[RMDB]
RNA sequence: GGGAACGACUCGAGUAGAGUCGAAAAAGGUUGGCGAAAGCUUGCCCGUGAUACAGGUCGAGAGUGAGUCUCCUCUCGCAAAUCAAAGGCUCAAAAAAAAGUAACUGCGAAUAACAUCGUCAGCUUCAAACGGGUAGCCAUAGCAGCCUAGUCUGUACAUCGCUAUAAUGUUCGCAUUAUAGCGAUGAAAAGAAACAACAACAACAAC
Reactivity to DMS in 0.01 (KOAc 150mM, MgCl2 10mM, bicine 150mM(pH8.5), 24C), signal-to-noise 1, nucleotides 027 to 156: a000g020g060u000u000g020g050c040g010a190a180a150g000c000u000u020g060c050c010c010g060u010g000a290u030a070c120a130g010g010u010c000g000a030g010a020g000u000g010a230g020u000c000u000c120c030u030c010u000c020g030c000a040a010a120u010c110a080a100a060g040g000c030u000c020a000a000a000a030a020a060a070a080g000u020a020a050c030u000g030c050g010a130a080u020a140a210c180a150u000c010g020u000c010a030g060c010u010u000c040a040a120a020c030g000g000g000u000a050g000c000c000a040u000a250g000c000a060g020c010c020u000a100g010u000c030u010g000u020a270
Reactivity to 2A3 in 0.01 (KOAc 150mM, MgCl2 10mM, bicine 150mM(pH8.5), 24C), signal-to-noise 3, nucleotides 027 to 156: a000g070g000u040u060g180g040c020g060a040a000a010g020c040u110u120g050c010c010c010g000u020g020a060u130a190c090a130g190g180u170c080g020a000g010a000g000u050g010a020g020u000c050u090c090c000u000c010u010c010g130c150a040a070a020u110c040a030a000a030g000g000c000u000c030a060a090a090a020a020a030a020a000g080u050a070a010c050u020g000c010g010a020a060u070a130a050c020a080u040c020g130u130c060a020g000c060u130u050c060a170a110a020c000g000g000g000u010a000g000c000c000a010u070a030g000c010a000g000c000c000u010a030g090u030c010u020g020u020a020
Chemical mapping of a 207-nucleotide RNA with DMS and 2A3. For 2A3 the reverse transcriptase was SuperScript II with manganese. Conditions: 150 mM KOAc, 10 mM MgCl2 and 150 mM bicine (pH 8.5), 24 C.